Annotation:
The record gives the reactivity of an RNA of 177 nucleotides to 2A3 and DMS.

RNA sequence: GGGAACGACUCGAGUAGAGUCGAAAAGCGACGAGCACGAGCGGCGCCAUGCGCGUGGGCACGAUCGCCCGCGGAUCGUGAAUCUCGUCGAUCAGCAGAUUGUUGCCGCGCUCGACACUACGGCCGAACGUGCAUUACCCUUCGGGGUAAUGCACGUAAAAGAAACAACAACAACAAC
Reactivity to 2A3 in 0.01 (KOAc 150mM, MgCl2 10mM, bicine 150mM(pH8.5), 24C), signal-to-noise 2, nucleotides 027 to 126: g130c030g060a090c000g050a020g000c030a050c010g000a000g000c050g030g010c030g000c030c140a230u260g030c070g000c010g030u110g000g000g040c030a000c110g220a260u230c120g010c020c020c090g050c030g000g020a100u010c000g030u030g050a140a160u140c140u000c090g070u040c030g000a060u040c020a000g000c000a040g060a300u150u200g120u190u090g000c000c010g000c000g000c020u020c020g020a020c060a000c100u110a090c040g050g000c010c020g000a090
Reactivity to DMS in 0.01 (KOAc 150mM, MgCl2 10mM, bicine 150mM(pH8.5), 24C), signal-to-noise 2, nucleotides 027 to 126: g000c030g010a060c020g000a070g020c020a050c000g020a140g010c050g020g000c000g010c080c160a240u010g000c050g040c020g020u000g030g010g040c010a070c130g020a060u030c140g000c020c100c050g030c050g000g010a060u000c000g020u020g070a080a090u000c040u000c070g000u020c000g010a050u010c070a150g000c030a100g010a130u000u000g000u010u010g000c040c000g000c040g020c040u000c030g010a080c050a070c070u000a060c110g010g010c010c100g000a080

Background: It was measured as part of the RMDB library OK2TRN. For DMS the reverse transcriptase was MarathonRT.